[RMDB]
RNA sequence: GGGAACGACUCGAGUAGAGUCGAAAAUCGAAAUCAUCGGGAGUGAUCCAGAUGACGGUCCUGCCAUGAGACCGCAACGAGAGCAUGUCGCAUCGAAGGGACUCGGGGAGUCGGCAGCUUGCCCCACUAAGGCAGACGUUGUUCGCAACGUCUGCAACCACUCACGUCUGUUCGCAGACGUGAGUGGAAAAGAAACAACAACAACAAC
Reactivity to 2A3 in 0.01 (KOAc 150mM, MgCl2 10mM, bicine 150mM(pH8.5), 24C), signal-to-noise 2, nucleotides 027 to 156: u100c010g030a050a000a000u040c010a020u030c020g010g030g020a030g040u120g050a080u000c000c000a050g040a030u010g010a020c010g000g030u020c030c010u020g090c100c030a130u120g030a020g020a060c000c020g010c040a020a090c060g040a000g000a010g150c100a100u110g010u160c050g000c060a020u010c050g070a050a130g040g000g040a060c030u020c090g000g000g000g040a080g060u070c040g000g000c010a010g070c040u120u130g050c000c000c020c020a040c040u100a050a070g170g000c000a000g000a000c000g000u020u010g020u030u110c250g000c140a000a000c000g000u000c000u000g000c000a000a000